[RMDB]
Chemical mapping of a 177-nucleotide RNA with 2A3 and DMS. 2A3 adducts were read by reverse transcription with SuperScript II with manganese. The DMS profile rests on 1,839 reads. It was measured as part of the RMDB library OK2TRN. The RNA was probed in 150 mM KOAc, 10 mM MgCl2 and 150 mM bicine (pH 8.5) at 24 C.

RNA sequence: GGGAACGACUCGAGUAGAGUCGAAAAACAUUGGAUGGCGGAGGCCCGUUACCGCGGCGCUAAAGUCGUUGUCGUCAGCCCGGACUACGCCGACAACACCAAGUUCGCCGACGAGUGGGUGCGGUGCGUCUGCCUAGAAUUUCGAUUCUAGGCAGACAAAAGAAACAACAACAACAAC
Reactivity to 2A3 in 0.01 (KOAc 150mM, MgCl2 10mM, bicine 150mM(pH8.5), 24C), signal-to-noise 1, nucleotides 027 to 126: a000c040a050u050u170g110g010a090u160g020g000c060g000g050a040g090g000c000c030c030g000u050u090a050c000c040g050c020g020g000c060g000c050u130a070a070a070g030u090c060g000u010u060g000u030c000g000u000c040a060g050c000c080c020g020g030a100c090u080a040c100g030c080c000g060a060c010a060a000c000a000c050c000a010a040g080u110u060c010g060c060c020g060a200c030g080a060g100u110g090g010g030u070g090c000g000g030u040g070c010
Reactivity to DMS in 0.01 (KOAc 150mM, MgCl2 10mM, bicine 150mM(pH8.5), 24C), signal-to-noise 2, nucleotides 027 to 126: a120c140a120u000u010g010g010a110u000g000g020c030g000g020a250g000g010c020c030c030g000u000u010a070c140c080g000c010g020g000c050g010c040u010a030a210a110g010u000c100g000u010u000g000u000c030g010u010c060a140g010c050c040c090g030g010a060c100u000a080c080g010c150c000g010a020c010a010a030c050a090c020c060a120a170g000u000u000c020g000c020c020g000a090c100g020a120g010u020g020g000g000u010g020c040g010g010u010g020c140